Source information:
This 177-nucleotide RNA was probed chemically with 2A3 and DMS. Values cover nucleotides 27 to 126. For 2A3 the reverse transcriptase was SuperScript II with manganese.
[RMDB]
RNA sequence: GGGAACGACUCGAGUAGAGUCGAAAAAGUGCCUGGUACGCCAGGCACAAUGCAAAUGGUGUUUGUGGGUUUCCAUGAAGCCGUGGGGCAGGGAUUGCGCAAUACCUGUACCCCGCCAUUUGCCAAAACGAAACGAUUGUUUCGACAAUCGUUUCGUAAAAGAAACAACAACAACAAC
Reactivity to 2A3 in 0.01 (KOAc 150mM, MgCl2 10mM, bicine 150mM(pH8.5), 24C), signal-to-noise 4, nucleotides 027 to 126: a000g010u010g000c000c000u010g010g000u060a060c300g080c010c000a010g010g030c000a000c000a000a020u070g000c000a000a000a000u000g010g030u030g070u070u090u150g190u120g060g030g020u040u150u070c050c040a100u190g030a040a000g100c060c030g030u210g000g000g010g000c010a000g020g000g020a060u090u190g140c200g000c090a010a050u030a130c010c000u020g030u270a300c010c000c000c000g010c000c010a000u000u000u010g000c020c000a070a080a000
Reactivity to DMS in 0.01 (KOAc 150mM, MgCl2 10mM, bicine 150mM(pH8.5), 24C), signal-to-noise 2, nucleotides 027 to 126: a030g000u000g010c000c020u000g000g000u000a100c200g050c000c000a000g000g030c040a010c000a000a010u080g000c030a020a000a010u000g000g030u000g030u000u000u040g040u010g010g000g040u000u020u010c000c090a030u040g000a050a020g020c150c120g000u020g000g000g040g000c000a010g000g020g010a060u000u010g000c250g000c180a000a020u000a120c000c000u030g010u000a130c000c000c000c150g010c000c000a000u000u030u000g010c020c300a030a070a100
Source: RMDB libraries RFM100 and RFMREP, as collected in RNAgym.
The reactions ran in a buffer of 150 mM KOAc, 10 mM MgCl2 and 150 mM bicine (pH 8.5), at 24 C.